Structure probing data (2A3) for a 177-nucleotide construct. Conditions: 150 mM KOAc, 10 mM MgCl2 and 150 mM bicine (pH 8.5), 24 C. The data come from the RNA Mapping Database (RMDB), library RFM100.

[RMDB]
RNA sequence: GGGAACGACUCGAGUAGAGUCGAAAAGACAAAGACUCCUGGCAGCUCAAACGGCCUGGCAGAUGCUUGGAGAGAGGGGGCUUCUUGAGACAGCACCAUUUCUGGGAAGAGAGUCACCUGGGAGGGACGGGCCACAUAGAUUCGUCUAUGUGGCCCGAAAAGAAACAACAACAACAAC
Reactivity to 2A3 in 0.01 (KOAc 150mM, MgCl2 10mM, bicine 150mM(pH8.5), 24C), signal-to-noise 2, nucleotides 027 to 126: g080a030c040a000a090a040g050a090c000u000c000c000u000g070g060c000a000g010c050u000c010a090a060a050c090g010g060c070c040u050g010g010c000a010g020a130u190g040c040u070u000g020g000a010g000a020g090a040g000g000g000g080g000c000u010u060c000u000u190g100a120g000a020c080a000g050c140a030c020c040a070u000u030u060c060u090g000g030g020a040a110g080a020g030a010g080u080c000a130c060c050u000g000g040g000a100g000g020g040a000